Source information:
The record gives the reactivity of an RNA of 177 nucleotides to 2A3 and DMS. Conditions: 150 mM KOAc, 10 mM MgCl2 and 150 mM bicine (pH 8.5), 24 C. The 2A3 profile rests on 8,101 reads. DMS adducts were read by reverse transcription with MarathonRT. 2A3 adducts were read by reverse transcription with SuperScript II with manganese. The DMS profile rests on 4,977 reads. Values are in units of 0.01, from 0 to 300, in steps of 10.
RNA sequence: GGGAACGACUCGAGUAGAGUCGAAAAGAUAUGGAGAUACAGAGCUUUUGACGAAGAUAUACUCGGAAACGAGUAUAAUUUCGAUAAGCUCGUAUCUCCUAAGUCAAAACCGAUCUUCGGAUCGGAAUCAUUAUUAGCUCUUCGGAGCUAAUAAUGAAAAAGAAACAACAACAACAAC
Reactivity to 2A3 in 0.01 (KOAc 150mM, MgCl2 10mM, bicine 150mM(pH8.5), 24C), signal-to-noise 4, nucleotides 027 to 126: g030a000u060a040u140g030g000a010g000a010u020a050c210a300g000a030g020c010u140u150u240u300g290a200c100g000a000a000g050a000u010a000u000a030c000u000c000g010g020a040a040a030c010g000a000g030u000a000u000a000a010u000u020u000c000g050a050u040a250a010g000c000u000c010g000u000a000u000c000u000c000c000u000a000a000g000u020c010a000a000a080a200c000c010g000a000u000c000u050u100c300g220g010a000u010c000g000g010a000a030
Reactivity to DMS in 0.01 (KOAc 150mM, MgCl2 10mM, bicine 150mM(pH8.5), 24C), signal-to-noise 4, nucleotides 027 to 126: g010a040u010a300u000g010g010a000g020a020u000a010c000a190g030a010g010c000u000u000u020u000g010a300c180g000a000a000g000a100u000a000u000a010c000u000c000g010g000a080a110a110c000g000a010g000u010a000u000a000a080u000u000u000c010g010a170u000a010a020g010c000u000c000g000u000a000u000c000u000c000c000u000a010a050g010u000c030a080a050a120a220c000c000g000a000u000c000u000u020c210g020g010a010u000c000g010g000a060a060